[RMDB]
RNA sequence: GGGAACGACUCGAGUAGAGUCGAAAAGGUAGAGACUGUAGGAGCCAAGAUAAGGUGCAUAUGCUGGGAACACAAGCCCUUAAAUAAUGGCAGAGUAGUGACGUUUAUCCCCCAAGGGCUUUACAUACAUUAUGGUCUUAGAGCAACCCUAUCACUGCGUAAAACUAAGCUUCGGCUUAGUUUUACGAAAAGAAACAACAACAACAAC
Reactivity to DMS in 0.01 (KOAc 150mM, MgCl2 10mM, bicine 150mM(pH8.5), 24C), signal-to-noise 1, nucleotides 027 to 156: g020g060u010a080g010a170g010a080c060u000g030u000a120g000g010a160g030c020c000a020a110g040a160u000a010a070g010g020u000g040c050a070u010a070u000g030c010u010g000g000g030a170a080c030a050c040a060a030g000c040c000c000u030u000a010a050a160u000a110a100u010g030g050c030a120g010a150g020u000a110g020u000g000a010c030g030u000u000u000a140u000c000c020c000c030c060a040a080g040g010g000c000u000u000u010a050c060a140u000a030c080a080u020u000a060u000g040g020u000c020u010u000a040g000a070g000c000a010a090c000c010c030u000a060u000c030a090c090u000g010
Reactivity to 2A3 in 0.01 (KOAc 150mM, MgCl2 10mM, bicine 150mM(pH8.5), 24C), signal-to-noise 1, nucleotides 027 to 156: g060g000u060a040g000a000g010a100c030u010g000u090a050g050g000a030g080c020c020a090a000g020a040u110a080a030g000g080u140g000c010a020u050a010u260g010c030u050g000g000g050a160a000c060a030c000a140a090g000c000c000c000u050u040a140a100a040u080a090a060u050g010g000c010a010g040a000g070u130a010g020u010g090a000c050g000u100u080u300a200u130c010c000c000c000c030a020a030g000g010g000c000u000u010u030a060c030a040u060a020c010a000u050u110a050u120g040g010u000c000u030u010a010g000a000g000c010a020a090c030c020c000u060a030u090c030a000c090u110g030
The data come from the RNA Mapping Database (RMDB), library OK3TST. An RNA of 207 nucleotides, treated with DMS and 2A3 and read out base by base. 2A3 adducts were read by reverse transcription with SuperScript II with manganese. The 2A3 profile rests on 561 reads. The reactions ran in a buffer of 150 mM KOAc, 10 mM MgCl2 and 150 mM bicine (pH 8.5), at 24 C. For DMS the reverse transcriptase was MarathonRT. Values cover nucleotides 27 to 156.